[RMDB]
RNA sequence: GGGAACGACUCGAGUAGAGUCGAAAAGACACCCUUCGCAGAUGACCUCCUCGUUGGUGGGUGUCGGACGUGUUGUCAGUCACAGGCAACAGUUAACGAUCUGCGUAAAUAAAAAGAGAAGAACAAACCUCGAUAUGAUAUUCGUAUCAUAUCGAGGAAAAGAAACAACAACAACAAC
Reactivity to 2A3 in 0.01 (KOAc 150mM, MgCl2 10mM, bicine 150mM(pH8.5), 24C), signal-to-noise 5, nucleotides 027 to 126: g000a000c000a000c000c000c000u050u100c010g000c000a010g020a010u010g020a000c000c000u060c000c010u100c110g120u130u160g010g010u000g000g010g010u030g000u010c000g010g000a040c120g090u050g000u030u000g000u000c020a050g140u140c040a050c070a130g000g000c000a000a000c010a000g000u010u040a020a020c040g020a010u000c000u010g000c000g000u000a020a040a040u170a020a050a020a010a000g140a010g020a180a030g050a060a010c070a070a050a070
Reactivity to DMS in 0.01 (KOAc 150mM, MgCl2 10mM, bicine 150mM(pH8.5), 24C), signal-to-noise 2, nucleotides 027 to 126: g010a010c000a000c000c000c000u000u010c010g120c050a010g020a000u000g000a010c060c000u000c100c010u000c100g030u000u040g020g000u010g030g010g040u000g000u000c000g000g000a030c000g040u000g000u010u040g010u000c010a110g010u000c300a120c220a150g000g000c000a000a000c000a100g020u000u000a000a010c000g030a030u000c000u000g000c000g020u020a080a080a080u060a060a030a090a060a060g010a080g010a070a100g010a110a110c140a060a110a050